[RMDB]
RNA sequence: GGGAACGACUCGAGUAGAGUCGAAAACGGUCCAGCAGGACAUCAGCAUGCUGGCCGAGCAAGUGGCGGCCGUGGCCAUGGCCGCGCGGCUGGCAUGCGCCAGCGGCGUGCUGUUUCCCGAUCCCGAGACUCGUAAAAUCUUCGGAUUUUACGAGUCAAAAGAAACAACAACAACAAC
Reactivity to 2A3 in 0.01 (KOAc 150mM, MgCl2 10mM, bicine 150mM(pH8.5), 24C), signal-to-noise 1, nucleotides 027 to 126: c040g020g020u050c020c020a050g090c030a030g000g090a040c020a140u120c060a040g050c000a010u020g000c000u010g060g000c010c000g030a030g030c080a140a130g080u080g170g020c000g000g000c030c030g050u110g100g080c110c140a130u130g030g000c000c000g030c000g020c000g000g000c000u010g060g000c000a020u060g020c010g010c010c030a030g020c060g120g000c050g030u020g000c010u030g040u020u020u030c000c000c020g050a060u030c000c000c020g060a070
Reactivity to DMS in 0.01 (KOAc 150mM, MgCl2 10mM, bicine 150mM(pH8.5), 24C), signal-to-noise 2, nucleotides 027 to 126: c150g030g000u000c060c040a120g020c120a060g000g030a050c100a030u020c170a090g000c030a030u010g010c000u000g020g000c010c000g000a080g030c140a080a150g020u010g030g020c020g030g020c010c010g020u010g000g050c150c120a070u000g020g000c080c080g030c010g010c000g000g000c000u000g010g020c000a030u000g000c090g030c070c050a050g000c020g010g030c300g000u030g010c020u010g000u000u010u000c030c000c000g000a140u000c010c000c020g000a280